[RMDB]
RNA sequence: GGGAACGACUCGAGUAGAGUCGAAAAUGUGAAGAAUGGAGAGAGAAACGGAACAAAAUGUAUCAUGGAAGAUCUCCAAAUGUUGAUCGCUUUGGUCAACUUCUUGAUGAAAUUCCAGGACAAUCUACCAUUUAUGGGAGUUCGCUCCCAUAAAUGGAAAAGAAACAACAACAACAAC
Reactivity to 2A3 in 0.01 (KOAc 150mM, MgCl2 10mM, bicine 150mM(pH8.5), 24C), signal-to-noise 3, nucleotides 027 to 126: u130g020u030g050a040a100g040a050a070u090g030g000a010g000a010g010a020g000a090a100a030c060g030g020a030a020c050a070a120a030a010u110g010u040a140u110c080a170u050g020g010a000a010g010a040u010c010u010c050c000a010a000a010u080g000u000u000g000a010u000c040g040c300u150u180u300g000g000u000c000a010a000c000u030u020c050u020u020g010a020u060g010a010a020a040u030u020c000c000a000g020g020a010c020a030a090u020c010u080a110
Reactivity to DMS in 0.01 (KOAc 150mM, MgCl2 10mM, bicine 150mM(pH8.5), 24C), signal-to-noise 4, nucleotides 027 to 126: u020g020u000g000a100a070g000a060a080u010g010g000a060g000a060g000a110g010a070a080a080c100g000g020a040a030c130a060a060a110a080u010g000u010a070u000c000a060u010g000g000a030a030g000a230u000c000u010c100c020a010a040a020u000g000u000u000g000a010u000c020g010c300u010u010u010g020g010u000c010a000a010c000u000u000c120u000u000g000a070u000g010a010a060a250u000u010c000c010a060g000g010a040c110a040a070u010c100u000a140
Conditions: 150 mM KOAc, 10 mM MgCl2 and 150 mM bicine (pH 8.5), 24 C. The record gives the reactivity of an RNA of 177 nucleotides to 2A3 and DMS. For 2A3, 2,938 sequencing reads were counted. For DMS, 2,971 sequencing reads were counted.